[RMDB]
RNA sequence: GGGAACGACUCGAGUAGAGUCGAAAAUCAAUCAUGUUCGCAUGAUUGAAAAGGUCAGGUGACCAAACCACGACACGCGUCCAAGCGACCGAGCCCGGAGGCAAAGUGCAAUCUUCGGAUUGCACAAGAUAUAAAGAUGAUUCGUCAUCUUUAUAUCAAAAGAAACAACAACAACAAC
Reactivity to 2A3 in 0.01 (KOAc 150mM, MgCl2 10mM, bicine 150mM(pH8.5), 24C), signal-to-noise 9, nucleotides 027 to 126: u010c000a000a000u000c000a000u000g030u050u050c180g020c120a010u000g000a000u000u000g000a040a040a010a010g030g010u030c040a030g010g260u100g200a040c000c000a050a070a010c040c020a050c060g060a020c030a010c060g050c020g020u000c030c020a100a040g040c040g070a050c030c010g010a020g020c010c020c010g020g040a030g030g020c060a110a060a020g000u000g000c000a000a000u000c000u020u070c200g100g000a000u000u010g000c000a000c000a000a000
Reactivity to DMS in 0.01 (KOAc 150mM, MgCl2 10mM, bicine 150mM(pH8.5), 24C), signal-to-noise 9, nucleotides 027 to 126: u000c000a000a000u000c000a010u000g010u000u010c200g030c000a010u000g000a010u000u000g000a010a050a120a100g010g010u000c020a130g010g020u010g010a080c040c040a060a100a140c040c020a080c070g010a060c060a090c090g010c080g000u000c030c060a070a130g000c070g000a060c040c040g010a090g010c020c010c050g000g000a070g000g010c120a060a060a120g010u000g000c000a010a010u000c000u000u010c180g020g010a010u000u000g010c000a000c000a020a040